[RMDB]
This 177-nucleotide RNA was probed chemically with DMS and 2A3.
2A3 adducts were read by reverse transcription with SuperScript II with manganese.
The RNA was probed in 150 mM KOAc, 10 mM MgCl2 and 150 mM bicine (pH 8.5) at 24 C.
For DMS the reverse transcriptase was MarathonRT.

RNA sequence: GGGAACGACUCGAGUAGAGUCGAAAAGGGUAAAGCUAUAUAAUUGACGAGCCUGAACACGGAGACGUUUAUACCCAGGAAAAUCAGGAGAGCCAUCCAUUUGUAGCUGUUCAUGUGCUCCCCAUUGCGUGAGAUUGAUGUUCGCAUCAAUCUCACGAAAAGAAACAACAACAACAAC
Reactivity to DMS in 0.01 (KOAc 150mM, MgCl2 10mM, bicine 150mM(pH8.5), 24C), signal-to-noise 2, nucleotides 027 to 126: g010g040g000u010a090a110a100g020c010u000a010u000a070u010a020a150u020u010g000a060c030g010a180g010c000c010u000g020a100a100c220a030c150g000g010a130g020a060c070g000u000u000u000a100u000a140c050c010c040a130g010g000a090a060a040a140u000c070a060g000g000a020g000a150g000c020c020a030u000c050c080a070u000u010u020g020u000a020g060c020u000g030u000u010c080a050u000g020u000g040c080u000c030c010c000c080a170u000u010g000
Reactivity to 2A3 in 0.01 (KOAc 150mM, MgCl2 10mM, bicine 150mM(pH8.5), 24C), signal-to-noise 1, nucleotides 027 to 126: g030g000g010u110a140a000a000g040c000u030a010u010a070u020a300a130u070u070g020a040c040g000a020g050c010c010u030g060a050a010c020a000c040g030g020a070g010a020c000g050u050u020u020a170u090a020c020c020c020a000g130g050a040a170a040a020u090c060a020g000g040a100g040a000g130c030c010a040u000c010c000a040u070u080u070g010u000a000g000c000u010g040u070u070c080a080u110g020u020g060c010u000c000c000c020c000a030u080u290g000